Chemical mapping of a 177-nucleotide RNA with DMS and 2A3.
The RNA was probed in 150 mM KOAc, 10 mM MgCl2 and 150 mM bicine (pH 8.5) at 24 C.
As a SHAPE reagent, 2A3 marks flexible, mostly unpaired nucleotides at the ribose 2'-OH.
The DMS profile rests on 9,098 reads.

RNA sequence: GGGAACGACUCGAGUAGAGUCGAAAAUCGUGAGAUGUGGUGCCUCACGCGCUCGAGGCGUCCGUGGUCAGAGAGACCACUGACGCAAAAACUCGAGCGCAAAUAAAGUGCAUUACAUACAGAAUAAAGCUAAUAUCAUGUUCGCAUGAUAUUAGCUAAAAGAAACAACAACAACAAC
Reactivity to DMS in 0.01 (KOAc 150mM, MgCl2 10mM, bicine 150mM(pH8.5), 24C), signal-to-noise 4, nucleotides 027 to 126: u030c070g010u030g000a070g010a050u000g010u000g000g000u000g000c010c010u000c170a090c190g000c010g000c000u000c010g000a020g000g020c000g040u000c000c110g000u000g030g020u000c000a200g000a180g010a250g020a000c000c000a000c000u010g000a000c010g020c050a040a020a040a090a300c000u000c000g000a010g000c000g000c000a000a050a080u030a060a070a030g010u050g000c000a000u000u000a010c000a010u010a060c050a110g000a110a080u010a060a110
Reactivity to 2A3 in 0.01 (KOAc 150mM, MgCl2 10mM, bicine 150mM(pH8.5), 24C), signal-to-noise 6, nucleotides 027 to 126: u140c060g020u080g090a300g020a060u060g000u000g010g010u000g000c000c000u060c020a050c110g000c000g000c000u000c000g000a000g000g000c000g000u000c010c000g000u000g000g000u000c030a060g070a050g030a010g000a300c000c000a000c000u000g000a000c000g000c000a060a130a040a030a030c000u000c000g000a000g000c000g000c000a010a000a000u130a020a070a010g100u140g040c000a000u010u010a000c000a000u060a040c040a020g230a120a100u230a140a130

DMS adducts were read by reverse transcription with MarathonRT. For 2A3, 9,096 sequencing reads were counted.